Structure probing data (2A3 and DMS) for a 177-nucleotide construct. The RNA was probed in 150 mM KOAc, 10 mM MgCl2 and 150 mM bicine (pH 8.5) at 24 C. In probing experiments dimethyl sulfate is read out at A N1 and C N3, which are open when not base-paired. For 2A3, 2,390 sequencing reads were counted. Source: RMDB library TTRDEL, as collected in RNAgym. 2A3 adducts were read by reverse transcription with SuperScript II with manganese.
[RMDB]
RNA sequence: GGGAACGACUCGAGUAGAGUCGAAAAGAUAUGGAACGGCAAGCUUUUGACGGAUAGUCGGAAACGAUGGGUCCGAUAAGCUUGCGUUCCUAAGUCAAACCCCAGAUGAGUUCGCUCAUCUGGGGAACAUGCGUGAAUUCUUCGGAAUUCACGCAUGAAAAGAAACAACAACAACAAC
Reactivity to 2A3 in 0.01 (KOAc 150mM, MgCl2 10mM, bicine 150mM(pH8.5), 24C), signal-to-noise 2, nucleotides 027 to 126: g010a020u050a040u140g000g020a000a010c030g300g000c050a030a000g000c030u200u050u160u300g230a110c000g030g000a000u010a010g020u010c020g040g020a070a050a030c010g010a010u040g300g210g140u040c010c020g120a090u020a090a000g000c000u010u000g000c000g000u000u010c000c000u000a040a010g000u000c040a090a030a300c000c000c000c000a000g010a000u010g000a000g090u010u240c240g050c200u010c000a000u060c010u000g000g000g040g010a010a010
Reactivity to DMS in 0.01 (KOAc 150mM, MgCl2 10mM, bicine 150mM(pH8.5), 24C), signal-to-noise 1, nucleotides 027 to 126: g000a030u000a300u000g000g020a020a010c010g020g060c020a020a010g010c000u010u010u000u000g050a170c040g000g000a000u000a300g010u000c020g030g020a100a120a140c010g010a000u020g020g000g010u000c000c010g000a180u000a000a030g000c020u000u000g020c010g020u000u000c000c000u010a030a080g050u010c030a050a150a220c000c010c000c010a010g000a020u000g010a010g010u000u000c230g040c000u000c000a000u000c000u000g050g020g000g000a010a010